[RMDB]
RNA sequence: GGGAACGACUCGAGUAGAGUCGAAAACUGUAACCGUAAGGGGAAAGCAAAGUAAUUUGCGCAGCCUUUAAGGGAUGUUACUCAUGCCACGAGAAAUUCAAUAUAUAAGAGCUCUCGUCUAUUGCAAGAUAUAAGUUACUGAGCAUGUUAUGUUGGAGUAACAACAGUACUUCGGUACUGUUGUUACAAAAGAAACAACAACAACAAC
Reactivity to 2A3 in 0.01 (KOAc 150mM, MgCl2 10mM, bicine 150mM(pH8.5), 24C), signal-to-noise 2, nucleotides 027 to 156: c030u100g030u150a020a020c000c010g010u030a040a040g020g000g050g020a020a060a160g000c030a040a000a060g020u130a060a200u020u040u000g010c110g000c030a030g090c000c000u060u140u110a070a040g100g000g000a020u070g010u050u090a070c040u020c070a000u020g000c070c000a020c030g050a010g050a010a030a010u220u100c010a090a000u060a020u030a030u150a300a060g000a010g040c010u000c000u010c000g070u000c060u120a130u210u110g010c020a030a050g010a050u060a040u060a170a020g020u040u010a020c070u070g010a030g060c000a020u050g050u070u080a090u050g020u030u050g010g010a070